[RMDB]
RNA sequence: GGGAACGACUCGAGUAGAGUCGAAAAAGGCACUCGCCAGGUAAUGAACAUAGUCUCUUCCUGGCUGUGGAAGGAGCUGGGGAAACGCAAGCGGCCACGCGUCUGCACCAAAGAAGAGUUUAUCAACCGACGGAGGAACCUUCGGGUUCCUCCGUCGAAAAGAAACAACAACAACAAC
Reactivity to 2A3 in 0.01 (KOAc 150mM, MgCl2 10mM, bicine 150mM(pH8.5), 24C), signal-to-noise 1, nucleotides 027 to 126: a010g060g000c080a020c040u080c120g010c010c000a000g030g000u060a000a090u130g030a050a040c180a140u240a200g140u000c030u040c000u070u110c000c000u000g050g000c000u000g000u030g010g000a080a000g000g020a000g050c000u010g000g000g000g020a080a040a000c030g000c110a100a050g040c000g030g030c000c000a080c050g030c000g030u030c000u000g000c000a090c010c030a030a010a010g100a020a020g090a090g060u220u100u030a210u170c010a000a030c000